Description: This 207-nucleotide RNA was probed chemically with 2A3 and DMS. For DMS, 8,358 sequencing reads were counted. DMS adducts were read by reverse transcription with MarathonRT. 2A3 adducts were read by reverse transcription with SuperScript II with manganese.

RNA sequence: GGGAACGACUCGAGUAGAGUCGAAAACGUGCAUUCGUGCACGAAAAAAUCCUAAGUCGUGUCGUUUGACGAAGUACAGAGCUGAUGGUCGGAAACGACCACCAGCGACGAAGUACUUCCGAGACACGAUAUGGAAAAAAACCACGUUCGCGUGGAACAUACUUGUACCCUUCGGGGUACAAGUAUGAAAAGAAACAACAACAACAAC
Reactivity to 2A3 in 0.01 (KOAc 150mM, MgCl2 10mM, bicine 150mM(pH8.5), 24C), signal-to-noise 4, nucleotides 027 to 156: c010g000u000g000c020a020u050u130c200g140u060g000c000a000c010g040a060a010a010a000a000a000u070c030c010u050a120a020g010u010c010g000u000g010u000c050g050u060u200u250g070a110c030g010a000a000g000u000a000c020a020g040a000g010c000u000g000a010u000g030g000u000c000g010g040a070a070a100c010g000a000c000c000a010c010c000a000g020c000g010a010c010g050a120a010g000u000a010c010u010u000c010c000g040a020g000a010c000a000c000g000a000u000a020u020g010g060a020a050a000a020a050a000a030c000c050a010c020g030u050u090c280g000c000g130u010g000g010a010a000
Reactivity to DMS in 0.01 (KOAc 150mM, MgCl2 10mM, bicine 150mM(pH8.5), 24C), signal-to-noise 3, nucleotides 027 to 156: c030g020u000g000c000a050u000u000c300g050u010g040c000a020c000g050a020a010a090a100a060a080u000c010c010u000a070a240g040u000c010g040u000g010u010c000g030u000u000u000g020a140c090g010a010a010g020u000a010c020a090g000a300g020c000u000g040a000u010g010g020u010c010g000g000a090a060a200c010g010a000c000c000a000c010c000a010g030c000g000a080c120g000a190a160g000u000a010c000u000u000c010c000g010a150g010a030c010a030c000g030a040u010a110u020g000g020a010a000a080a050a080a090a130c000c010a020c010g020u000u000c200g040c040g000u000g000g020a200a230